[RMDB]
RNA sequence: GGGAACGACUCGAGUAGAGUCGAAAAGAUAUGGAACAAGUCGGGAGCUGGUCGGAAACGACUCAGCGAAGAACGACCUGUUCCUAAGUCAAACGACAGGAUAAUUGUUCGCAAUUAUCCUGUCGAACUAGAUAUAGCAGUUCGCUGCUAUAUCUAGAAAAGAAACAACAACAACAAC
Reactivity to DMS in 0.01 (KOAc 150mM, MgCl2 10mM, bicine 150mM(pH8.5), 24C), signal-to-noise 7, nucleotides 027 to 126: g000a040u000a300u000g000g000a020a010c010a010a030g000u000c000g000g000g010a090g020c010u000g000g010u000c000g000g000a100a110a190c010g010a010c000u020c010a010g020c000g000a050a110g010a100a200c020g010a020c000c020u000g000u000u000c000c010u000a020a080g000u000c040a080a110a240c010g000a010c000a010g000g000a010u000a000a010u000u000g010u000u020c210g020c010a000a010u000u000a000u000c000c000u000g000u000c000g000a010a090
Reactivity to 2A3 in 0.01 (KOAc 150mM, MgCl2 10mM, bicine 150mM(pH8.5), 24C), signal-to-noise 7, nucleotides 027 to 126: g020a010u100a010u140g010g000a010a000c000a020a020g000u010c010g010g030g020a030g010c000u000g000g020u010c020g020g040a120a050a030c000g020a010c130u160c300a000g000c010g010a030a020g020a010a000c000g000a010c000c010u000g000u010u000c000c000u010a080a030g030u020c060a110a050a070c020g000a000c000a000g010g000a010u000a010a000u020u030g040u120u130c300g000c170a000a000u000u000a000u000c000c000u000g000u000c000g000a000a000